Source: RMDB library OK2TRN, as collected in RNAgym. Chemical mapping of a 177-nucleotide RNA with DMS and 2A3.
RNA sequence: GGGAACGACUCGAGUAGAGUCGAAAAGAUAGUACGCGACGGCCGUACCUAUCUCAUCAUAGGCCCGAUCUCAGAGAUAGAGUACCUAGUACAUGCUGAGGCCAUCAGCGAUCGGCCCGUACACGCGGUGCUGAUACGGGUUCGCCCGUAUCAGCACAAAAGAAACAACAACAACAAC
Reactivity to DMS in 0.01 (KOAc 150mM, MgCl2 10mM, bicine 150mM(pH8.5), 24C), signal-to-noise 2, nucleotides 027 to 126: g020a140u010a070g020u010a020c020g060c100g020a100c070g010g000c090c010g040u000a020c090c000u010a010u010c000u000c040a150u000c200a050u000a160g010g010c020c010c060g030a080u010c070u010c150a100g040a040g000a030u000a030g000a090g040u000a020c010c130u030a120g000u000a020c080a160u010g030c020u000g000a010g000g030c110c200a090u000c030a040g010c030g040a060u030c020g010g010c010c020c100g000u000a030c070a300c090g000c060g000
Reactivity to 2A3 in 0.01 (KOAc 150mM, MgCl2 10mM, bicine 150mM(pH8.5), 24C), signal-to-noise 1, nucleotides 027 to 126: g000a010u100a030g040u080a050c000g000c030g110a070c040g110g030c000c010g020u060a070c030c000u040a030u000c000u000c020a130u040c000a040u120a160g070g030c060c070c050g050a230u080c060u040c090a010g000a000g020a060u020a050g080a060g000u020a010c000c070u070a020g020u020a080c060a080u120g000c000u000g010a080g030g000c020c020a150u020c010a000g010c020g000a040u070c020g000g000c030c080c000g020u020a030c070a000c050g060c020g100
The reactions ran in a buffer of 150 mM KOAc, 10 mM MgCl2 and 150 mM bicine (pH 8.5), at 24 C. For DMS, 946 sequencing reads were counted.